[RMDB]
Notes
Structure probing data (2A3 and DMS) for a 177-nucleotide construct. Source: RMDB library OK2TRN, as collected in RNAgym. 2A3 adducts were read by reverse transcription with SuperScript II with manganese. The DMS profile rests on 3,978 reads.
RNA sequence: GGGAACGACUCGAGUAGAGUCGAAAACACACUGUGAUCAUCACAUAAGUAGGCGUGACUUGAGUCCCAGGCCAUGACACUGAAGCCCUCGGAGUGUGACCCGGGGCCACGGGGCUGUGGAUAAUGCCGGUAGUAUUCCUUUCGAGGAAUACUACCGAAAAGAAACAACAACAACAAC
Reactivity to 2A3 in 0.01 (KOAc 150mM, MgCl2 10mM, bicine 150mM(pH8.5), 24C), signal-to-noise 3, nucleotides 027 to 126: c050a010c000a000c020u070g020u040g030a130u220c110a060u100c000a060c000a050u160a170a030g070u050a030g050g000c050g090u110g060a050c020u030u040g010a010g020u010c000c000c010a020g090g000c010c010a040u060g030a020c020a020c090u070g040a070a010g010c030c000c000u080c020g030g020a080g010u090g030u060g090a120c000c010c040g000g000g000g000c010c000a020c030g020g000g060g000c010u040g010u060g030g030a080u100a270a050u250g080c020
Reactivity to DMS in 0.01 (KOAc 150mM, MgCl2 10mM, bicine 150mM(pH8.5), 24C), signal-to-noise 4, nucleotides 027 to 126: c080a070c060a050c060u000g030u010g000a160u010c120a140u010c040a050c020a040u010a080a090g010u010a090g010g010c030g020u010g000a050c030u010u010g010a070g030u000c050c040c020a110g010g000c000c030a020u000g000a050c060a050c020u020g010a120a200g020c050c010c010u020c120g010g000a100g020u010g020u010g010a140c100c020c060g020g010g000g000c020c050a040c100g000g000g020g010c030u010g010u000g010g010a140u000a050a060u020g010c120